[RMDB]
RNA sequence: GGGAACGACUCGAGUAGAGUCGAAAAGACUGCGUGCACUUGAGACGAUAUCGAGCCGGAAAUUAAUCGAUAAUGUCUCCGGUAGUGGAUACGAUCCGGCAAGUAUCGACUACUUGUGCUCGUAGGAACGUAAUAUCCGGUUCGCCGGAUAUUACGUAAAAGAAACAACAACAACAAC
Reactivity to 2A3 in 0.01 (KOAc 150mM, MgCl2 10mM, bicine 150mM(pH8.5), 24C), signal-to-noise 7, nucleotides 027 to 126: g070a010c010u010g000c000g020u020g000c000a000c010u030u050g000a000g010a020c000g010a020u010a000u110c020g000a010g000c000c010g000g080a090a120a040u210u180a090a090u140c070g030a040u090a140a080u230g020u020c000u020c040c020g050g030u180a090g080u120g130g010a000u000a040c010g000a030u010c000c000g000g000c010a010a040g010u000a000u020c010g050a010c010u200a140c000u010u020g000u000g000c000u000c010g000u000a000g000g010a010
Reactivity to DMS in 0.01 (KOAc 150mM, MgCl2 10mM, bicine 150mM(pH8.5), 24C), signal-to-noise 2, nucleotides 027 to 126: g010a190c000u000g000c020g020u000g000c000a020c040u060u010g000a070g030a040c010g010a010u000a010u030c020g000a300g000c000c010g000g000a090a130a050u000u000a130a040u030c110g040a090u030a050a150u020g000u000c000u000c030c100g000g000u010a060g050u000g000g010a010u010a040c010g000a100u000c000c000g040g060c010a160a150g010u000a000u000c010g000a170c000u020a040c020u030u000g030u020g030c000u000c000g030u000a030g000g040a110

The record gives the reactivity of an RNA of 177 nucleotides to 2A3 and DMS. Values are in units of 0.01, from 0 to 300, in steps of 10. DMS adducts were read by reverse transcription with MarathonRT. For 2A3, 7,634 sequencing reads were counted. Source: RMDB library OK1LIB, as collected in RNAgym.